Annotation
An RNA of 207 nucleotides, treated with 2A3 and DMS and read out base by base. Conditions: 150 mM KOAc, 10 mM MgCl2 and 150 mM bicine (pH 8.5), 24 C. Source: RMDB library RNAMAK, as collected in RNAgym.
[RMDB]
RNA sequence: GGGAACGACUCGAGUAGAGUCGAAAAACCGCGUUCGCGCGGUAAGUCGCGUACUACCCACAUCUUCUUGGAUUUAUUCCUACCCACCGAAUCCCAAAUAGGAUUCGAGGGAAUUGUCAGAAGUUGUGGGUAUCGCCCGUUAAUCGUUCGCGAUUAAGUCUUUUGAAUAAUUCGUUAUUCAAAAGACAAAAGAAACAACAACAACAAC
Reactivity to 2A3 in 0.01 (KOAc 150mM, MgCl2 10mM, bicine 150mM(pH8.5), 24C), signal-to-noise 8, nucleotides 027 to 156: a000c020c010g000c010g020u040u060c290g000c000g000c010g140g000u040a070a060g060u020c010g000c020g010u020a020c020u020a000c010c000c000a000c000a010u010c000u040u000c010u080u140g220g010a050u290u300u080a030u120u070c010c000u010a100c070c060c060a080c060c000g000a000a000u030c020c020c040a230a300a130u290a110g010g000a000u000u000c000g000a020g010g000g000a000a010u020u040g020u020c020a010g000a010a000g000u020u020g000u000g000g000g000u000a000u010c010g010c000c000c010g040u070u130a050a050u110c060g010u030u070c040g020c000g020a010u070u100a120a040
Reactivity to DMS in 0.01 (KOAc 150mM, MgCl2 10mM, bicine 150mM(pH8.5), 24C), signal-to-noise 3, nucleotides 027 to 156: a040c000c010g010c010g020u000u000c230g050c040g040c000g020g020u010a010a040g050u000c050g040c020g020u000a080c050u000a030c000c000c000a060c000a000u000c010u000u010c010u000u020g050g020a030u000u000u000a020u020u000c010c000u000a060c030c020c000a300c160c000g000a030a010u010c010c000c000a060a170a260u010a060g010g010a030u000u000c000g010a060g040g000g000a020a010u000u000g020u000c020a090g010a040a040g020u000u010g070u010g020g000g040u000a010u000c010g000c010c020c020g000u000u000a070a110u000c020g020u000u000c040g050c020g010a060u000u000a060a150